Chemical mapping of a 177-nucleotide RNA with 2A3 and DMS. The reactions ran in a buffer of 150 mM KOAc, 10 mM MgCl2 and 150 mM bicine (pH 8.5), at 24 C. The DMS profile rests on 2,694 reads.
[RMDB]
RNA sequence: GGGAACGACUCGAGUAGAGUCGAAAAGAAGACCGCUGGCGAAGGCGGGUCCAUGCGAAACACGUGACGAACAGGAACGAAAGCGGGCGUAGCAAACCGCAUUAGAUACGCAAGUGGUCCACGCCGAAAAUUAUAUGAAAUUCGUUUCAUAUAAUUUAAAAGAAACAACAACAACAAC
Reactivity to 2A3 in 0.01 (KOAc 150mM, MgCl2 10mM, bicine 150mM(pH8.5), 24C), signal-to-noise 2, nucleotides 027 to 126: g080a060a010g000a010c010c000g000c060u020g020g030c040g060a100a040g100g000c010g020g010g000u010c070c030a060u020g000c000g070a070a010a010c030a010c020g040u050g050a010c010g020a120a030c050a130g070g060a090a000c000g050a170a000a000g000c000g000g000g000c030g030u010a000g000c000a040a210a000c000c000g000c010a000u090u200a090g090a130u110a180c020g020c000a040a040g030u020g000g000u000c010c010a050c080g030c000c000g000a060
Reactivity to DMS in 0.01 (KOAc 150mM, MgCl2 10mM, bicine 150mM(pH8.5), 24C), signal-to-noise 2, nucleotides 027 to 126: g000a120a130g020a060c000c010g020c020u010g000g010c020g010a070a070g000g000c000g000g000g020u000c180c160a100u000g010c010g010a100a120a050c070a060c020g010u000g010a290c040g000a090a080c180a130g000g010a100a300c020g000a090a180a300g000c000g000g000g000c000g000u000a300g000c100a090a280a300c000c000g000c000a070u010u010a030g020a130u030a100c040g010c000a020a020g000u000g010g000u000c010c030a030c100g000c000c010g000a060